An RNA of 177 nucleotides, treated with DMS and 2A3 and read out base by base.
For DMS, 3,028 sequencing reads were counted.

[RMDB]
RNA sequence: GGGAACGACUCGAGUAGAGUCGAAAAGAUAUGGAUUCUACCCACCGCUUCCCAAGCGACGAAGUCGGAAACGACAGAGCUUGAACAGCGAGGAAUCCUAAGUCAAACUGUACCUUCGGGUACAGAAGAUCUGUGAAUAGUUCGCUAUUCACAGAUCAAAAGAAACAACAACAACAAC
Reactivity to DMS in 0.01 (KOAc 150mM, MgCl2 10mM, bicine 150mM(pH8.5), 24C), signal-to-noise 4, nucleotides 027 to 126: g010a140u010a220u010g000g010a010u000u000c000u010a160c000c020c010a300c120c030g000c020u000u010c260c180c010a030a000g010c010g000a120c220g010a060a140g000u000c010g030g020a070a080a140c000g000a020c000a040g000a120g030c000u000u000g000a060a120c190a040g000c000g010a080g020g000a010a000u000c000c000u010a090a090g000u000c120a090a090a200c010u000g010u000a000c000c000u000u000c200g020g010g000u000a000c000a000g010a100a080
Reactivity to 2A3 in 0.01 (KOAc 150mM, MgCl2 10mM, bicine 150mM(pH8.5), 24C), signal-to-noise 3, nucleotides 027 to 126: g060a090u190a130u250g010g010a000u020u010c020u100a260c000c000c030a020c040c010g000c020u050u050c000c070c000a010a000g010c000g300a300c050g070a170a030g000u010c020g000g090a120a080a100c010g000a000c010a030g030a000g010c000u000u010g010a110a030c030a040g000c010g000a000g010g020a000a010u000c010c000u020a100a020g150u090c100a100a050a100c020u010g000u010a000c000c010u020u100c300g180g000g000u000a020c000a020g000a000a010